[RMDB]
RNA sequence: GGGAACGACUCGAGUAGAGUCGAAAAUUUCUUCUCAGUAUCAAGAUGUAGCAACCUUAAGUUGCCUUCCUAGAUACACCUCUGGUAAAACCCAAUUCUAUCACAGGUGGAAUGCUUCCCGUAGCGAACGCUGCUACUGAUUCGUCAGUAGCAGCGUAAAAGAAACAACAACAACAAC
Reactivity to 2A3 in 0.01 (KOAc 150mM, MgCl2 10mM, bicine 150mM(pH8.5), 24C), signal-to-noise 1, nucleotides 027 to 126: u020u010u020c040u110u020c090u010c070a030g020u010a000u020c000a010a050g010a060u050g110u170a050g000c010a000a010c030c040u150u260a270a080g000u020u030g000c000c020u010u000c010c000u010a060g020a000u020a000c000a040c040c000u000c020u050g050g000u040a020a050a070a110c000c050c010a030a120u070u080c030u010a020u040c000a000c000a060g050g000u000g000g000a050a020u030g020c000u020u010c000c010c010g040u040a030g060c080g120a070
Reactivity to DMS in 0.01 (KOAc 150mM, MgCl2 10mM, bicine 150mM(pH8.5), 24C), signal-to-noise 2, nucleotides 027 to 126: u000u010u000c030u000u000c100u000c180a110g010u000a020u000c020a120a070g000a010u000g010u000a110g020c000a020a010c010c150u010u020a070a260g000u000u000g010c000c020u000u000c020c040u020a110g000a050u000a040c010a090c050c040u000c200u000g000g010u010a010a020a080a070c030c120c110a100a130u000u000c040u000a010u000c030a020c110a060g050g030u000g000g000a020a040u000g000c130u000u000c000c000c010g010u010a090g020c090g000a150
Structure probing data (2A3 and DMS) for a 177-nucleotide construct. The RNA was probed in 150 mM KOAc, 10 mM MgCl2 and 150 mM bicine (pH 8.5) at 24 C. For DMS the reverse transcriptase was MarathonRT. For DMS, 1,202 sequencing reads were counted.